[RMDB]
RNA sequence: GGGAACGACUCGAGUAGAGUCGAAAAGCACCGCAGCAUUGCAACCCAAGCUGAUGGUUAACAACAUUAAGGGUAAUCCUUUAAUAAAUGUCAUUCUCUUUUCCUUAAUUAAUGACAAGGUAAAAUCCGUGUUGUCUUUAUUCGUAAAGACAACACGAAAAGAAACAACAACAACAAC
Reactivity to 2A3 in 0.01 (KOAc 150mM, MgCl2 10mM, bicine 150mM(pH8.5), 24C), signal-to-noise 2, nucleotides 027 to 126: g060c050a010c010c010g040c020a010g000c070a300u000u110g000c020a060a060c020c010c020a040a000g040c000u050g010a170u140g070g000u080u150a130a050c080a030a020c010a100u030u040a030a020g020g040g010u100a070a120u300c000c000u040u050u080a070a040u080a030a220a050u110g000u010c010a030u050u000c040u010c000u060u080u070u100c010c010u120u160a150a110u050u100a090a040u220g030a020c010a020a040g050g000u110a050a080a020a090u090c120
Reactivity to DMS in 0.01 (KOAc 150mM, MgCl2 10mM, bicine 150mM(pH8.5), 24C), signal-to-noise 2, nucleotides 027 to 126: g050c240a050c010c010g020c060a020g000c000a050u000u000g010c130a140a100c210c140c000a050a030g030c010u030g000a070u000g020g010u010u020a070a180c120a060a120c160a060u000u000a010a020g010g000g010u020a170a140u010c020c010u000u000u010a010a010u000a020a130a090u010g000u000c000a060u000u010c150u010c130u000u000u000u000c010c050u010u000a050a110u000u000a060a020u010g000a080c080a090a110g020g010u000a090a080a090a050u020c100